The data come from the RNA Mapping Database (RMDB), library M2PK50. Structure probing data (2A3 and DMS) for a 177-nucleotide construct. Values cover nucleotides 27 to 126. For 2A3, 7,826 sequencing reads were counted. The reactions ran in a buffer of 150 mM KOAc, 10 mM MgCl2 and 150 mM bicine (pH 8.5), at 24 C.

RNA sequence: GGGAACGACUCGAGUAGAGUCGAAAAGUUACACGCUUCGGCGUGUAACAAAUACUCAAACGGUCGCGGAAACGAGAGGACACUCUAGGAGGCAACCAUGCAAAACCCAUUGCUUCGGCAAUGGGAACAUUGAUCUAUCGUUCGCGAUAGAUCAAUGAAAAGAAACAACAACAACAAC
Reactivity to 2A3 in 0.01 (KOAc 150mM, MgCl2 10mM, bicine 150mM(pH8.5), 24C), signal-to-noise 3, nucleotides 027 to 126: g010u000u010a000c000a010c000g030c010u030u070c180g110g000c000g020u000g000u000a000a000c010a000a000a000u020a000c000u010c010a090a050a080c090g020g020u030c030g000c030g070g040a090a080a050c050g030a030g010a030g090g040a060c030a040c120u030c020u050a060g080g000a010g100g000c020a020a030c010c020a030u090g040c040a050a060a110a200c000c000c000a000u000u000g000c000u020u030c160g100g000c000a000a000u000g010g000g000a000a000
Reactivity to DMS in 0.01 (KOAc 150mM, MgCl2 10mM, bicine 150mM(pH8.5), 24C), signal-to-noise 5, nucleotides 027 to 126: g000u000u000a010c000a020c000g020c000u000u010c220g040g020c000g030u000g010u000a000a000c000a020a070a080u010a100c020u000c010a090a120a140c120g010g010u000c020g010c020g020g000a090a090a120c120g010a040g000a060g000g000a130c250a060c030u000c030u010a110g000g000a170g010g010c030a050a020c040c020a110u000g010c160a060a070a080a090c010c000c000a020u010u000g000c000u000u010c210g020g000c000a000a010u000g000g000g000a010a020